[RMDB]
RNA sequence: GGGAACGACUCGAGUAGAGUCGAAAAUCCUCGUAUCGGCAAUUAUUGCUAUCGGAGGCUUGACUUUCAUGGACACUGGGCCGUUAACACCCUUUAUAGACGCAAAAGGAGACGCUAUACCAUCGUGUGUGAUGAAAAAGUUCGCUUUUUCAUCACAAAAAGAAACAACAACAACAAC
Reactivity to 2A3 in 0.01 (KOAc 150mM, MgCl2 10mM, bicine 150mM(pH8.5), 24C), signal-to-noise 3, nucleotides 027 to 126: u020c000c000u030c040g040u100a080u130c030g000g000c020a050a050u200u070a080u160u270g000c000u040a050u060c040g060g000a020g000g000c000u030u100g020a080c010u060u110u120c050a070u120g040g020a030c000a010c110u040g020g000g010c010c010g010u000u030a030a030c040a080c040c010c000u040u110u070a170u050a080g070a050c040g020c020a020a090a030a000g040g020a040g010a000c020g000c060u020a020u010a120c010c030a040u050c050g020u020g050
Reactivity to DMS in 0.01 (KOAc 150mM, MgCl2 10mM, bicine 150mM(pH8.5), 24C), signal-to-noise 5, nucleotides 027 to 126: u000c000c000u010c120g030u010a080u000c110g000g000c010a050a130u010u010a080u010u000g010c020u000a080u000c110g010g010a080g000g000c130u010u010g000a080c080u010u000u010c060a060u020g010g000a060c070a060c060u010g010g000g010c030c050g000u000u020a080a110c140a150c040c020c020u000u000u000a110u010a110g000a090c060g000c080a040a030a070a130g010g010a100g010a060c060g000c080u010a080u000a100c100c030a070u000c100g030u020g020
Background:
Chemical mapping of a 177-nucleotide RNA with 2A3 and DMS. Source: RMDB library OK2TRN, as collected in RNAgym. The DMS profile rests on 4,550 reads. Reactivities are given for positions 27 through 126.